Record summary: Chemical mapping of a 177-nucleotide RNA with DMS.

RNA sequence: GGGAACGACUCGAGUAGAGUCGAAAAUGAACACACCAGUGUAAGGGAUGUUUAUGACGAGCAAAGAAACCUUUACCCAUUACCAGCCGCAGGGCAACAGUGACCCGGCUCAUACCGCAACCGCGCCCCAACGGUCCAAAUUCGUUUGGACCGUUGGAAAAGAAACAACAACAACAAC
Reactivity to DMS in 0.01 (KOAc 150mM, MgCl2 10mM, bicine 150mM(pH8.5), 24C), signal-to-noise 1, nucleotides 027 to 126: u000g010a090a010c000a020c200a080c060c020a080g020u000g000u030a080a080g040g000g010a070u030g010u010u010u000a010u000g020a080c130g000a050g000c050a020a100a090g010a100a140a080c040c070u000u000u000a110c030c030c020a110u000u030a030c020c090a050g010c030c070g030c250a040g000g040g030c000a120a040c080a030g000u000g000a080c040c000c030g010g010c020u020c090a080u000a080c080c040g000c080a070a000c080c080g000c110g000c140c060

Reactivities are given for positions 27 through 126.
The reactions ran in a buffer of 150 mM KOAc, 10 mM MgCl2 and 150 mM bicine (pH 8.5), at 24 C.
It was measured as part of the RMDB library OK2TRN.